The record gives the reactivity of an RNA of 177 nucleotides to 2A3. 2A3 adducts were read by reverse transcription with SuperScript II with manganese. Conditions: 150 mM KOAc, 10 mM MgCl2 and 150 mM bicine (pH 8.5), 24 C.
[RMDB]
RNA sequence: GGGAACGACUCGAGUAGAGUCGAAAAACGGGCAGUGGCGAUGGCAACGCGGCAGCCGCAGGGUCGACUUCUUCGCAGCCGCAACAGACGGGCAACGGGCAAAGAGGGGAGCUCGUUCUGUUGGAAGCUGCUGGACGGCUUUCGAGCCGUCCAGCAGAAAAGAAACAACAACAACAAC
Reactivity to 2A3 in 0.01 (KOAc 150mM, MgCl2 10mM, bicine 150mM(pH8.5), 24C), signal-to-noise 1, nucleotides 027 to 126: a000c000g050g030g030c050a130g080u110g080g000c090g080a130u120g060g000c000a060a010c070g000c040g020g000c000a040g040c040c000g090c150a060g050g070g010u040c030g080a070c020u070u010c030u110u070c080g000c010a000g070c000c040g010c010a020a020c000a000g060a000c110g000g020g000c000a080a040c050g000g110g000c080a090a110a090g090a040g000g080g000g030a010g000c020u000c000g020u110u030c010u010g000u000u010g000g000a020a000g000